[RMDB]
RNA sequence: GGGAACGACUCGAGUAGAGUCGAAAACUUGACUAUCCGAGUGGCACUUCAGGAUCUCCUAUUGUUAACAGGAACGGAGAGGUGAUUGGGCUGUACGGCAAUGGCAUCCUUGUCGGUGACAACUCCAAGCUAAUGACGAGUUCGCUCGUCAUUAGCUAAAAGAAACAACAACAACAAC
Reactivity to 2A3 in 0.01 (KOAc 150mM, MgCl2 10mM, bicine 150mM(pH8.5), 24C), signal-to-noise 3, nucleotides 027 to 126: c010u110u070g050a090c020u090a070u070c020c000g040a060g030u110g020g000c010a030c050u080u020c070a130g100g120a260u050c000u020c010c000u020a070u180u130g090u110u130a100a130c080a110g020g030a130a040c030g030g000a090g000a000g060g030u070g000a130u030u130g010g090g020c030u000g020u050a030c020g020g000c010a030a090u030g030g020c000a040u140c020c000u000u050g020u070c030g000g100u020g010a040c020a050a020c020u000c040c030a060
Reactivity to DMS in 0.01 (KOAc 150mM, MgCl2 10mM, bicine 150mM(pH8.5), 24C), signal-to-noise 2, nucleotides 027 to 126: c100u030u020g000a130c110u000a050u010c060c070g010a200g000u000g000g040c050a060c040u000u000c080a130g020g000a080u040c020u000c020c000u030a050u010u030g020u010u050a070a160c220a130g060g000a140a080c230g010g000a110g030a090g000g020u000g000a050u020u030g000g000g000c060u000g040u000a090c030g000g000c030a020a010u040g000g030c140a030u000c020c000u030u040g000u000c000g020g000u000g000a080c240a050a080c080u050c040c090a130
Structure probing data (2A3 and DMS) for a 177-nucleotide construct. For 2A3, 1,331 sequencing reads were counted. The reactions ran in a buffer of 150 mM KOAc, 10 mM MgCl2 and 150 mM bicine (pH 8.5), at 24 C. The data come from the RNA Mapping Database (RMDB), library OK1LIB.